An RNA of 177 nucleotides, treated with 2A3 and DMS and read out base by base. For DMS the reverse transcriptase was MarathonRT. Conditions: 150 mM KOAc, 10 mM MgCl2 and 150 mM bicine (pH 8.5), 24 C. It was measured as part of the RMDB libraries RFM100 and RFMREP.
RNA sequence: GGGAACGACUCGAGUAGAGUCGAAAACUGGGGCCUUUCAAAAGAGAGCUUUGUAGAGGCAUUCUUUUUGACUACUUUUCUCUAGCGUGCCAUUUUAGUUUUUGACGGAGAUUCGAAUGAACUUAAGCCUGUUCACAUAAUUCGUUAUGUGAACAGGAAAAGAAACAACAACAACAAC
Reactivity to 2A3 in 0.01 (KOAc 150mM, MgCl2 10mM, bicine 150mM(pH8.5), 24C), signal-to-noise 9, nucleotides 027 to 126: c040u050g010g000g040g030c010c000u030u070u060c060a030a020a080a010g120a020g020a030g070c030u050u060u060g100u160a040g010a030g070g000c010a050u070u060c020u030u080u030u040u060g040a030c010u110a120c000u210u110u120u070c020u010c000u000a010g020c010g020u030g010c010c010a100u100u080u030u120a040g020u020u020u010u040u050g040a050c050g110g040a110g020a120u060u050c020g050a050a080u140g020a060a020c010u040u050a070a020g050
Reactivity to DMS in 0.01 (KOAc 150mM, MgCl2 10mM, bicine 150mM(pH8.5), 24C), signal-to-noise 4, nucleotides 027 to 126: c070u010g000g010g010g000c030c020u000u000u010c030a030a040a060a090g000a130g020a140g010c080u000u020u030g000u010a060g030a040g000g010c020a030u010u010c000u010u000u000u020u010g000a080c050u010a050c080u000u010u020u020c040u000c020u000a020g000c090g000u010g010c020c020a110u050u020u000u010a040g000u010u000u000u020u010g010a130c070g010g010a100g000a130u020u000c020g020a070a070u010g000a040a080c020u000u000a070a130g000
Values cover nucleotides 27 to 126.